[RMDB]
RNA sequence: GGGAACGACUCGAGUAGAGUCGAAAAGAUAUGGACUGAUAGACGACGAGGAUCUAUAUCGGAAACGAUAUAGGGAGUCGCUAUUCAGUCCUAAGUCAAAAGGCGAAACCGUUCGCGGUUUCGCCAACUACACAUGAGUGUUCGCACUCAUGUGUAGAAAAGAAACAACAACAACAAC
Reactivity to DMS in 0.01 (KOAc 150mM, MgCl2 10mM, bicine 150mM(pH8.5), 24C), signal-to-noise 3, nucleotides 027 to 126: g010a020u010a300u020g020g000a010c000u010g000a020u000a030g010a300c160g030a000c000g030a090g020g000a030u010c000u000a010u000a010u000c010g000g000a120a080a180c000g010a010u000a000u000a020g010g000g000a050g020u000c000g010c000u000a010u000u000c000a000g010u000c000c000u000a010a080g010u000c020a090a090a090a160g010g020c000g000a000a000a000c000c010g040u000u010c300g000c010g000g020u000u000u000c000g010c000c010a000a020
Reactivity to 2A3 in 0.01 (KOAc 150mM, MgCl2 10mM, bicine 150mM(pH8.5), 24C), signal-to-noise 3, nucleotides 027 to 126: g040a020u070a030u120g000g000a000c000u010g000a030u010a050g160a200c060g000a000c010g090a300g070g020a020u020c000u000a000u000a000u010c000g010g000a040a050a010c000g010a000u000a000u010a000g030g000g000a010g000u010c010g000c030u040a040u160u140c000a000g010u000c000c000u000a010a000g000u000c010a060a010a070a230g000g010c010g020a000a000a010c040c000g030u100u130c300g030c010g150g000u000u010u010c000g000c010c020a000a000